[RMDB]
RNA sequence: GGGAACGACUCGAGUAGAGUCGAAAAUAGAUUUUGCUUUGGCCGCUAAAAUGAUGUUCGCUGCCUUUACACAGUUUAAAGAAGCUGGAUUUAACGAAGAGCAGUCAUUCGAAUUAACACGUGAGAUAUUAAUUGAUUCAUUAAGUAAGAAUCAAUACUAGUUCCGAUAAUUCGUUAUCGGAACUAGAAAAGAAACAACAACAACAAC
Reactivity to DMS in 0.01 (KOAc 150mM, MgCl2 10mM, bicine 150mM(pH8.5), 24C), signal-to-noise 2, nucleotides 027 to 156: u000a160g000a080u020u000u010u030g000c030u000u010u000g000g000c020c000g030c010u010a060a070a070a070u000g030a200u000g010u000u000c060g010c020u000g020c030c020u020u010u010a150c060a150c080a090g000u000u000u010a040a080a170g030a150a050g000c000u000g010g000a100u000u020u000a060a150c110g000a060a090g010a080g020c000a050g020u000c050a120u010u000c080g020a070a060u010u010a080a050c100a080c090g030u020g000a070g020a160u000a000u000u010a070a080u000u000g000a030u000u000c000a150u000u000a060a200g000u010a140a200g000a030a000u000c010a010a080u000a300
Reactivity to 2A3 in 0.01 (KOAc 150mM, MgCl2 10mM, bicine 150mM(pH8.5), 24C), signal-to-noise 3, nucleotides 027 to 156: u080a010g050a050u060u060u050u140g030c050u030u020u080g080g000c040c020g030c040u080a090a100a020a020u170g030a050u030g070u030u090c030g000c050u000g000c010c000u010u010u040a040c080a010c000a020g030u060u040u190a110a200a100g080a030a020g010c020u020g040g060a150u100u120u110a060a020c080g000a030a020g040a030g050c010a000g060u110c030a070u080u070c040g050a110a030u080u070a160a030c030a000c120g020u060g070a050g010a010u090a030u130u180a090a000u010u010g000a000u000u000c000a030u060u160a150a020g070u020a120a010g040a000a010u000c000a000a000u000a020
Overview:
The data come from the RNA Mapping Database (RMDB), library OK3TST. The record gives the reactivity of an RNA of 207 nucleotides to DMS and 2A3. The RNA was probed in 150 mM KOAc, 10 mM MgCl2 and 150 mM bicine (pH 8.5) at 24 C.